[RMDB]
RNA sequence: GGGAACGACUCGAGUAGAGUCGAAAACUGCCGAAUGAUGCCAAUGUAUGGUGCCUACUGUCCAACGUAACCGUUAAUCGCUGCCUUGGCGGCGAUUAACAAUCACAGGGCGACACGUUGAGUGAGGUCUAAAAAACCCUUUCGAGGGUUUUUUAGAAAAAGAAACAACAACAACAAC
Reactivity to DMS in 0.01 (KOAc 150mM, MgCl2 10mM, bicine 150mM(pH8.5), 24C), signal-to-noise 3, nucleotides 027 to 126: c060u000g010c040c020g020a090a070u010g010a100u020g000c060c040a050a090u010g000u010a040u000g000g000u020g000c020c040u000a040c080u020g010u030c070c040a050a100c090g000u010a080a090c260c130g020u010u010a000a020u000c000g020c000u020g010c000c030u020u020g020g000c000g000g010c000g010a000u000u000a000a000c000a090a080u040c180a020c100a080g000g000g020c070g000a120c170a060c080g000u000u010g000a120g010u010g010a100g020g010
Reactivity to 2A3 in 0.01 (KOAc 150mM, MgCl2 10mM, bicine 150mM(pH8.5), 24C), signal-to-noise 2, nucleotides 027 to 126: c020u070g010c010c000g080a100a050u160g020a070u170g070c000c000a070a130u070g030u030a060u120g110g030u040g030c020c030u070a070c060u050g030u060c020c030a080a010c050g020u050a060a020c060c020g010u010u000a000a000u000c010g000c000u000g000c000c040u050u200g170g000c000g000g000c000g000a000u000u000a020a020c000a010a010u030c020a000c010a020g050g040g000c040g030a000c030a040c030g010u020u030g020a060g070u030g070a060g070g070
Structure probing data (DMS and 2A3) for a 177-nucleotide construct. Reactivities are rounded to 0.1 and cut off at 0 and 3. 2A3 adducts were read by reverse transcription with SuperScript II with manganese. The data come from the RNA Mapping Database (RMDB), libraries RFM100 and RFMREP. The RNA was probed in 150 mM KOAc, 10 mM MgCl2 and 150 mM bicine (pH 8.5) at 24 C.